[RMDB]
RNA sequence: GGGAACGACUCGAGUAGAGUCGAAAAUUAAAGGAGGAGGAGGAGUGUGUGUGUUCCCAGCUGCUGAGUAGAACCUCCGCACACACGCGAAAGCUACGAGCAGCAGCAGUGCGGAAACGGUGAAAAAUCACUGAUGAAGCUUCGGCUUCAUCAGUGAAAAAGAAACAACAACAACAAC
Reactivity to DMS in 0.01 (KOAc 150mM, MgCl2 10mM, bicine 150mM(pH8.5), 24C), signal-to-noise 1, nucleotides 027 to 126: u010u030a050a120a110g000g010a010g020g000a050g020g010a110g010g020a100g030u010g000u000g010u000g020u000g050u000u000c000c000c000a280g020c060u010g050c010u000g000a170g040u000a070g010a060a070c050c010u000c050c000g010c010a060c090a090c160a030c160g000c010g040a040a170a060g010c010u000a040c090g020a110g030c030a050g000c060a080g000c000a140g040u000g000c100g000g000a040a040a050c110g000g000u000g000a020a030a060a110a090

Source information:
The data come from the RNA Mapping Database (RMDB), library M2PK90. Chemical mapping of a 177-nucleotide RNA with DMS. For DMS the reverse transcriptase was MarathonRT. The DMS profile rests on 665 reads.